[RMDB]
RNA sequence: GGGAACGACUCGAGUAGAGUCGAAAAGAUAGGUGAUGUUCGCAUCACCUAUCCACAUCACCUUUGUGACUGUAGCAAUGACGGAGUGCCCAUUGGGCACCUAAGACAGCUAGAGUCACUCUGGUCCAAGCAUCAGUUCACUUCGGUGAACUGAUAAAUCAACAUUCGGGUUCGCCCGAAUGUUGAUAAAAGAAACAACAACAACAAC
Reactivity to 2A3 in 0.01 (KOAc 150mM, MgCl2 10mM, bicine 150mM(pH8.5), 24C), signal-to-noise 3, nucleotides 027 to 156: g010a000u010a010g020g030u000g020a000u010g030u060u140c300g050c060a000u010c000a000c000c000u010a000u000c000c010a000c000a080u210c050a030c000c000u000u010u010g000u000g010a010c000u070g020u300a000g000c070a240a300u070g040a050c070g050g050a170g020u010g010c050c010c020a300u300u300g010g000g010c000a010c000c010u120a050a030g050a050c020a030g170c030u010a020g000a000g110u010c000a010c000u020c000u000g010g000u040c020c010a090a080g070c040a040u010c000a000g000u000u000c000a000c010u030u090c210g110g000u000g000a000a000c000u000g000a000u000a020a180
Structure probing data (2A3) for a 207-nucleotide construct.
Values cover nucleotides 27 to 156.
2A3 adducts were read by reverse transcription with SuperScript II with manganese.
It was measured as part of the RMDB library RNAMAK.